Chemical mapping of a 207-nucleotide RNA with DMS and 2A3. For DMS the reverse transcriptase was MarathonRT. Values cover nucleotides 27 to 156. The data come from the RNA Mapping Database (RMDB), library OK3TST.

RNA sequence: GGGAACGACUCGAGUAGAGUCGAAAAUGCUCAUAGCUUGCUGGCCUCCUUUGCGCGCAAGAGGGCGAUCAGAAGUGCGAUGGCGGGCAAAACUUCAAGAGUUCAGUUAGCUCAUCGCCAGUGAAAGACUUCGCGCACCGUUCGAAUGCGGCGGUCAAUUUGCAUAUGUUUUCGAACAUAUGCAAAUAAAAGAAACAACAACAACAAC
Reactivity to DMS in 0.01 (KOAc 150mM, MgCl2 10mM, bicine 150mM(pH8.5), 24C), signal-to-noise 3, nucleotides 027 to 156: u010g000c010u000c010a160u000a110g010c060u000u000g020c030u000g020g040c050c040u020c010c020u000u000u000g010c040g010c040g070c080a080a100g030a260g010g010g010c020g020a160u000c050a110g000a100a080g030u000g040c000g010a060u000g020g030c000g020g020g000c000a030a070a100a050c020u000u010c100a180a190g000a050g050u000u000c030a260g010u000u000a150g020c000u000c040a070u010c010g020c010c030a210g000u000g000a100a100a250g020a080c020u000u000c020g000c030g060c030a060c020c020g000u000u000c040g020a180a150u000g020c040g010g010c040g000g020u000c050a060
Reactivity to 2A3 in 0.01 (KOAc 150mM, MgCl2 10mM, bicine 150mM(pH8.5), 24C), signal-to-noise 5, nucleotides 027 to 156: u100g010c010u010c080a060u110a070g030c060u040u130g030c020u070g040g040c010c010u090c020c030u080u120u090g040c090g000c020g000c040a050a020g010a050g050g050g010c030g000a020u040c020a030g100a220a010g030u060g180c030g020a040u030g010g010c030g000g030g000c010a040a060a060a030c040u160u160c100a140a070g050a030g160u090u110c060a040g000u050u080a030g010c020u020c130a040u030c020g000c020c010a040g020u040g110a070a060a030g030a020c020u020u000c050g000c010g010c020a050c020c000g040u080u120c010g040a100a060u150g040c040g020g000c010g000g020u020c000a040